Conditions: 150 mM KOAc, 10 mM MgCl2 and 150 mM bicine (pH 8.5), 24 C. The record gives the reactivity of an RNA of 177 nucleotides to DMS and 2A3. For DMS the reverse transcriptase was MarathonRT. 2A3 adducts were read by reverse transcription with SuperScript II with manganese. For 2A3, 948 sequencing reads were counted.

RNA sequence: GGGAACGACUCGAGUAGAGUCGAAAAUUAGCUUACUUUACUUACUAUUUUCCUAGGGUAGAGCUUGACCAAGCAUCUCUUUUACACGGAGAAGAUAUCUGUGCAAACCAGAUUACCUUGAAAGUUCCCCCAUUCUAUUGUUCGCAAUAGAAUGGGGAAAAGAAACAACAACAACAAC
Reactivity to DMS in 0.01 (KOAc 150mM, MgCl2 10mM, bicine 150mM(pH8.5), 24C), signal-to-noise 2, nucleotides 027 to 126: u000u030a000g030c100u010u010a080c090u010u010u030a060c070u020u000a170c050u010a090u000u020u000u000c060c020u000a030g020g000g030u010a040g020a130g000c000u000u010g000a090c190c060a040a070g020c050a170u000c010u000c000u000u010u010u010a160c190a060c300g000g030a020g000a070a060g000a090u010a030u000c020u000g030u000g020c180a040a160a120c110c020a060g000a030u010u010a060c070c020u000u000g010a060a100a140g020u010u010c060
Reactivity to 2A3 in 0.01 (KOAc 150mM, MgCl2 10mM, bicine 150mM(pH8.5), 24C), signal-to-noise 1, nucleotides 027 to 126: u070u040a000g000c010u100u110a060c010u240u250u080a060c020u090u060a030c010u070a100u030u080u050u010c000c000u010a060g000g010g030u040a020g030a040g090c030u030u040g080a110c050c080a020a000g030c000a030u030c000u010c000u000u090u020u170a110c080a000c040g010g020a020g000a040a020g030a070u080a010u000c010u010g010u010g060c040a010a000a040c040c000a040g010a020u040u000a050c060c000u010u040g130a130a050a070g080u110u040c020